[RMDB]
Chemical mapping of a 177-nucleotide RNA with 2A3 and DMS. For DMS, 1,432 sequencing reads were counted. Conditions: 150 mM KOAc, 10 mM MgCl2 and 150 mM bicine (pH 8.5), 24 C. Reactivities are given for positions 27 through 126. Source: RMDB library OK1LIB, as collected in RNAgym.
RNA sequence: GGGAACGACUCGAGUAGAGUCGAAAACAAACAAACAAUGGGCGGCGAAAUGGUACAGUAAGAAAAAGAAAAGAAACGCCAACCCAAAACUUACUGUAGGAACAAAACAAAAACAAAACAAACAAAACACGUACGAUAAUUUCGAUUAUCGUACGUGAAAAGAAACAACAACAACAAC
Reactivity to 2A3 in 0.01 (KOAc 150mM, MgCl2 10mM, bicine 150mM(pH8.5), 24C), signal-to-noise 3, nucleotides 027 to 126: c030a010a130a020c000a020a060a020c080a060a060u270g010g100g000c040g000g000c020g050a100a040a050u170g060g000u020a000c010a000g000u020a000a030g180a040a160a050a030a000g220a030a070a050a000g150a040a110a000c030g000c010c030a010a110c040c000c000a020a090a020a160c000u000u000a000c000u010g000u000a010g130g080a050a110c040a030a090a040a020c090a040a050a060a040a030c060a000a170a020a000c060a020a100a030c040a000a060a000a060
Reactivity to DMS in 0.01 (KOAc 150mM, MgCl2 10mM, bicine 150mM(pH8.5), 24C), signal-to-noise 2, nucleotides 027 to 126: c060a070a160a100c120a010a040a070c180a150a080u000g000g000g000c300g000g140c060g050a120a070a090u000g020g020u010a010c000a040g010u000a000a000g040a130a120a060a060a100g000a230a060a020a080g010a010a160a030c120g030c000c000a090a210c000c000c060a060a000a120a000c000u000u000a000c010u010g010u090a130g000g010a030a070c270a050a000a040a060c300a040a010a010a070a030c120a220a060a030a060c200a270a040a080c170a010a090a000a120